[RMDB]
RNA sequence: GGGAACGACUCGAGUAGAGUCGAAAAGCGGCGAAGCGUUGCAAGCUCGUCCGCAUUCAGUGUCGAGACAUCUUCGCCGUCGAGCAGAUAUCGCCCGCCGGUCGGCGUGUCGAGACAGCCGAGAAUAGUCACUCAUAUAGUUCGCUAUAUGAGUGACAAAAGAAACAACAACAACAAC
Reactivity to 2A3 in 0.01 (KOAc 150mM, MgCl2 10mM, bicine 150mM(pH8.5), 24C), signal-to-noise 8, nucleotides 027 to 126: g010c000g020g000c020g100a140a020g020c030g090u190u190g120c130a100a040g000c000u010c010g160u080c020c020g000c000a000u050u080c020a020g100u000g010u030c010g010a010g000a030c010a050u040c060u110u040c050g000c000c000g010u000c000g000a010g000c020a010g050a240u200a070u220c110g010c020c010c000g010c010c000g050g020u230c060g000g000c030g000u010g010u000c010g000a000g000a010c010a010g000c010c030g090a090g060a100a060u120a110
Reactivity to DMS in 0.01 (KOAc 150mM, MgCl2 10mM, bicine 150mM(pH8.5), 24C), signal-to-noise 9, nucleotides 027 to 126: g010c000g000g000c010g010a060a070g030c060g000u000u010g020c260a150a190g000c000u000c000g000u010c010c010g020c040a060u000u000c090a100g010u000g000u010c010g010a300g000a020c020a020u000c050u000u000c050g020c000c010g000u000c010g010a030g010c010a140g010a190u010a080u010c160g010c000c030c000g000c070c010g000g010u010c040g020g010c300g000u000g000u010c020g010a300g000a040c030a060g000c030c040g010a100g000a070a110u000a150